RNA sequence: GGGAACGACUCGAGUAGAGUCGAAAAGAAAAUAAUGCGUACGAAGAUGGACGUACGCAACCAGUGCGUACCAGAAUCGCACAUCCAGCGCUCUAAGGUGAGCGCAAAACCUAAUAAUAGAAAAAAACUUUUACACGUAGUUCGCUACGUGUAAAAGAAAAGAAACAACAACAACAAC
Reactivity to DMS in 0.01 (KOAc 150mM, MgCl2 10mM, bicine 150mM(pH8.5), 24C), signal-to-noise 1, nucleotides 027 to 126: g000a210a130a050a060u000a090a070u000g010c030g000u000a000c010g050a170a150g010a030u000g030g000a080c000g010u000a000c000g000c000a010a010c180c080a090g000u010g000c000g000u000a100c030c040a050g000a120a060u000c000g020c000a000c010a130u010c100c130a200g010c000g030c000u010c000u030a240a200g000g000u030g000a000g030c010g030c000a030a040a100a070c050c090u000a010a020u010a040a070u040a130g040a040a000a060a080a030a040a030
Reactivity to 2A3 in 0.01 (KOAc 150mM, MgCl2 10mM, bicine 150mM(pH8.5), 24C), signal-to-noise 1, nucleotides 027 to 126: g010a000a080a040a020u290a030a060u030g000c000g000u000a000c000g020a050a070g120a160u210g050g010a010c010g000u000a000c000g020c040a000a000c010c010a010g010u000g000c010g030u030a170c000c090a060g090a040a020u080c000g010c010a010c000a010u030c010c010a020g030c000g000c000u010c000u020a060a110g280g000u070g010a000g000c010g000c010a000a000a010a030c010c000u030a080a080u210a190a090u130a290g260a090a040a020a030a020a010a080
Structure probing data (DMS and 2A3) for a 177-nucleotide construct.
The DMS profile rests on 646 reads.
2A3 adducts were read by reverse transcription with SuperScript II with manganese.
The RNA was probed in 150 mM KOAc, 10 mM MgCl2 and 150 mM bicine (pH 8.5) at 24 C.
The data come from the RNA Mapping Database (RMDB), library M2PK90.